Source information:
The record gives the reactivity of an RNA of 177 nucleotides to DMS and 2A3. The 2A3 profile rests on 1,260 reads. For DMS, 1,307 sequencing reads were counted. The RNA was probed in 150 mM KOAc, 10 mM MgCl2 and 150 mM bicine (pH 8.5) at 24 C. DMS adducts were read by reverse transcription with MarathonRT.

[RMDB]
RNA sequence: GGGAACGACUCGAGUAGAGUCGAAAACAAAAGCUUGAUCGGUUUCCAGCAACAGCCGAUCGACGGCUUCGCCCAGGGCCGCUCCCGGGCGACCCGACCAUUGCUGUCGCCGCGUAACGCCAUCACGCAAUGGCGCAUCAUUCGUGAUGCGCCAUUGAAAAGAAACAACAACAACAAC
Reactivity to DMS in 0.01 (KOAc 150mM, MgCl2 10mM, bicine 150mM(pH8.5), 24C), signal-to-noise 2, nucleotides 027 to 126: c100a060a070a050a080g020c020u000u020g010a020u000c030g020g000u010u000u020c100c050a100g000c110a070a100c240a030g020c010c040g000a010u000c000g000a100c160g000g020c030u000u000c060g000c000c000c000a130g000g010g000c060c110g010c070u020c010c030c080g030g000g010c000g020a010c300c000c010g010a060c100c080a070u020u000g010c020u000g010u000c040g010c050c060g000c100g010u000a050a080c140g010c020c020a030u000c100a030c120g000
Reactivity to 2A3 in 0.01 (KOAc 150mM, MgCl2 10mM, bicine 150mM(pH8.5), 24C), signal-to-noise 1, nucleotides 027 to 126: c000a010a180a000a020g030c040u110u120g010a000u020c010g040g010u080u060u040c150c090a030g070c020a070a060c020a120g000c000c020g000a030u030c000g010a020c020g030g000c080u040u000c000g000c000c050c010a070g000g030g010c070c020g000c090u060c000c010c040g000g020g000c000g000a010c040c010c000g030a080c050c040a110u070u130g010c020u030g040u080c030g000c020c020g050c020g020u000a080a020c040g020c010c000a060u100c050a030c100g080